An RNA of 177 nucleotides, treated with DMS and 2A3 and read out base by base. Reactivities are given for positions 27 through 126. The reactions ran in a buffer of 150 mM KOAc, 10 mM MgCl2 and 150 mM bicine (pH 8.5), at 24 C. For DMS the reverse transcriptase was MarathonRT. It was measured as part of the RMDB library OK2TST.
[RMDB]
RNA sequence: GGGAACGACUCGAGUAGAGUCGAAAAGACCAUAUGCUGUCUCUAUUGGGGAUGGGUGUGAGUCGCCUACUCAGUAGCUAACAUCAGGGCCACUUGAUGAAUCAUCGAAUUAGAAACAUGCAUAUGGGUUCACCACAUGGUUCGCCAUGUGGUGAACAAAAGAAACAACAACAACAAC
Reactivity to DMS in 0.01 (KOAc 150mM, MgCl2 10mM, bicine 150mM(pH8.5), 24C), signal-to-noise 2, nucleotides 027 to 126: g000a280c000c000a010u000a010u000g010c000u000g030u000c020u010c000u000a020u000u010g030g050g010g000a080u000g000g010g030u010g030u000g000a140g030u000c190g030c070c070u000a030c060u000c030a040g000u010a120g060c090u010a070a180c010a030u000c060a020g000g000g010c120c240a060c030u000u020g000a030u000g000a130a050u000c040a030u030c030g000a210a080u000u000a020g000a050a030a010c020a000u000g030c000a010u000a000u000g000g000
Reactivity to 2A3 in 0.01 (KOAc 150mM, MgCl2 10mM, bicine 150mM(pH8.5), 24C), signal-to-noise 2, nucleotides 027 to 126: g050a020c000c000a000u020a000u020g000c010u000g000u020c010u000c010u040a010u040u070g050g020g010g020a050u170g040g050g000u040g000u040g010a120g120u090c030g040c000c000u010a080c010u030c020a070g040u100a050g030c030u110a100a030c000a030u040c030a020g020g020g050c000c040a140c060u010u020g020a000u020g050a060a070u070c030a040u090c080g080a120a060u040u000a060g030a030a060a000c020a020u230g000c000a000u000a010u030g000g000